Chemical mapping of a 177-nucleotide RNA with 2A3.

RNA sequence: GGGAACGACUCGAGUAGAGUCGAAAACUUUAAACGAAAGAAAUAAUCCAGACCCCUAACAUCGAAAGAUGAGUACAUUCAACGUAUACCUACUAAUGUAGUUAAUGAAGGAUAAGGGAUUCCUCCUAGUGCGUUCGAAAUUCGUUUCGAACGCACUAAAAGAAACAACAACAACAAC
Reactivity to 2A3 in 0.01 (KOAc 150mM, MgCl2 10mM, bicine 150mM(pH8.5), 24C), signal-to-noise 2, nucleotides 027 to 126: c050u170u090u140a100a170a030c060g120a050a030a040g090a000a170a060u090a040a070u000c000c020a080g120a170c000c020c000c000u010a020a020c010a000u000c060g010a020a020a020g090a000u060g020a000g120u000a030c000a100u220u240c120a000a000c020g000u010a000u000a040c040c040u000a000c000u070a030a130u300g000u000a000g000u020u070a040a060u100g070a030a000g090g000a020u000a130a150g090g000g000a010u030u000c000c000u000c000c010u030

Values cover nucleotides 27 to 126. For 2A3 the reverse transcriptase was SuperScript II with manganese. Conditions: 150 mM KOAc, 10 mM MgCl2 and 150 mM bicine (pH 8.5), 24 C. Source: RMDB library RFM100, as collected in RNAgym. As a SHAPE reagent, 2A3 marks flexible, mostly unpaired nucleotides at the ribose 2'-OH.